Source: RMDB library TTRDES, as collected in RNAgym.
Structure probing data (DMS and 2A3) for a 177-nucleotide construct.

RNA sequence: GGGAACGACUCGAGUAGAGUCGAAAAAGAUAUGGAAAGUCGCUAGUGUAUGACCCGCUUUGAUGCACGAUCGGAAACGAUCGUGUAUAUCGAAGCGCAUACACUUGGACCGACUUUCCUAAGUCAAGUCUUCGUAUAAGUUCGCUUAUACGAAGACAAAAGAAACAACAACAACAAC
Reactivity to DMS in 0.01 (KOAc 150mM, MgCl2 10mM, bicine 150mM(pH8.5), 24C), signal-to-noise 6, nucleotides 027 to 126: a070g000a050u000a300u000g000g000a010a000a020g010u000c000g020c000u000a020g010u000g010u000a000u000g010a220c270c250c100g000c000u000u010u000g010a020u010g000c010a000c000g010a010u010c010g010g000a150a070a180c010g010a000u000c000g000u000g020u000a020u000a050u000c000g010a010a010g030c000g020c010a010u000a000c010a000c010u000u000g010g000a140c300c020g020a010c000u000u000u000c000c000u000a020a080g000u000c060a100a190
Reactivity to 2A3 in 0.01 (KOAc 150mM, MgCl2 10mM, bicine 150mM(pH8.5), 24C), signal-to-noise 3, nucleotides 027 to 126: a000g030a030u070a010u110g010g000a000a000a000g000u000c010g000c060u020a010g010u010g020u020a010u020g110a230c080c060c040g000c000u020u000u010g010a010u010g000c000a000c000g000a000u000c000g010g050a080a070a060c010g000a000u020c000g000u000g000u000a000u000a010u010c000g010a000a000g000c000g000c000a000u010a010c010a000c020u000u070g040g040a060c060c020g000a010c000u010u000u000c000c000u000a170a020g070u030c040a040a110
The reactions ran in a buffer of 150 mM KOAc, 10 mM MgCl2 and 150 mM bicine (pH 8.5), at 24 C. Values cover nucleotides 27 to 126.